[RMDB]
RNA sequence: GGGAACGACUCGAGUAGAGUCGAAAAAGUCUGUGCGGGAAGGCGUUCUCCUUGGAGCGUUUUGGCGUCUCUCUCAGAGAGCAGGGACCAGCAGGGGGAGGGGGGAGGCUUGCGAAAUAUGCCGACACCUAUGUGGAAGAUUCGUCUUCCACAUAGGAAAAGAAACAACAACAACAAC
Reactivity to 2A3 in 0.01 (KOAc 150mM, MgCl2 10mM, bicine 150mM(pH8.5), 24C), signal-to-noise 2, nucleotides 027 to 126: a000g100u070c060u060g080u040g050c040g010g040g050a060a000g070g000c010g020u040u000c040u040c050c070u090u230g080g030a030g050c050g010u000u010u140u300g130g000c080g090u020c000u050c000u000c010u030c110a130g090a020g000a010g180c060a020g020g000g040a060c000c070a020g020c090a050g000g000g000g010g040a110g030g030g010g050g010g000a010g050g020c050u020u080g010c000g040a070a020a030u250a040u100g040c010c010g020a010c020a040
Reactivity to DMS in 0.01 (KOAc 150mM, MgCl2 10mM, bicine 150mM(pH8.5), 24C), signal-to-noise 2, nucleotides 027 to 126: a090g010u000c040u010g020u020g000c090g010g010g000a110a060g010g000c040g010u000u000c010u020c070c090u000u000g020g000a040g000c180g020u000u000u000u000g020g020c060g020u020c010u000c000u010c050u000c130a160g010a090g010a020g030c100a050g020g020g010a120c080c070a090g010c080a090g000g000g000g000g010a090g020g020g000g000g000g000a090g010g020c070u000u010g020c100g020a060a060a090u000a050u010g000c030c030g010a110c220a140
The record gives the reactivity of an RNA of 177 nucleotides to 2A3 and DMS. 2A3 is a SHAPE reagent: it acylates the 2'-hydroxyl of flexible nucleotides of all four kinds. For 2A3, 1,959 sequencing reads were counted.